[RMDB]
RNA sequence: GGGAACGACUCGAGUAGAGUCGAAAACGCUGGGAGCCACCGAGAUCGGAGCCAGGCGAUAAGUAUACUGAAGCGCGCACGGUAUACUUUUGACGCCUGUGUACGAUCGUUUGACGUGGCUCCUGUGCUGAAGCGCGCACGGCAACCGAAAGGUGCGGUUAGCAUAGCAGUUCGCUGCUAUGCUAACAAAAGAAACAACAACAACAAC
Reactivity to DMS in 0.01 (KOAc 150mM, MgCl2 10mM, bicine 150mM(pH8.5), 24C), signal-to-noise 1, nucleotides 027 to 156: c090g010c030u000g030g010g030a060g020c040c000a060c000c010g030a090g020a010u000c020g010g000a220g040c200c020a000g010g040c050g030a130u010a020a000g050u000a000u000a000c010u000g010a100a080g050c030g070c040g090c030a300c060g010g030u000a030u000a000c000u000u000u000u000g000a210c040g010c000c040u000g000u020g020u000a150c000g000a000u000c020g050u000u010u000g010a120c170g040u000g010g000c000u000c000c000u000g010u000g000c000u000g030a080a060g000c040g030c030g020c000a110c020g000g020c030a080a120c030c030g000a140a150a220g020g020u010g000c000g000
Reactivity to 2A3 in 0.01 (KOAc 150mM, MgCl2 10mM, bicine 150mM(pH8.5), 24C), signal-to-noise 3, nucleotides 027 to 156: c060g000c010u040g000g030g000a000g000c010c000a000c000c010g040a020g000a020u000c010g030g040a050g140c040c010a010g000g040c000g030a070u110a270a020g000u000a000u010a010c010u040g070a240a050g010c010g010c000g000c020a030c010g010g000u010a000u010a000c040u050u050u070u150g230a130c060g000c010c000u010g000u060g010u010a000c000g010a010u020c000g000u100u080u160g020a020c010g000u010g000g000c000u000c000c000u000g000u010g000c020u080g030a090a020g000c000g030c010g000c000a000c010g040g010c040a100a180c030c000g060a110a030a050g010g000u030g000c050g020

This 207-nucleotide RNA was probed chemically with DMS and 2A3. Values cover nucleotides 27 to 156. 2A3 adducts were read by reverse transcription with SuperScript II with manganese. For 2A3, 3,397 sequencing reads were counted.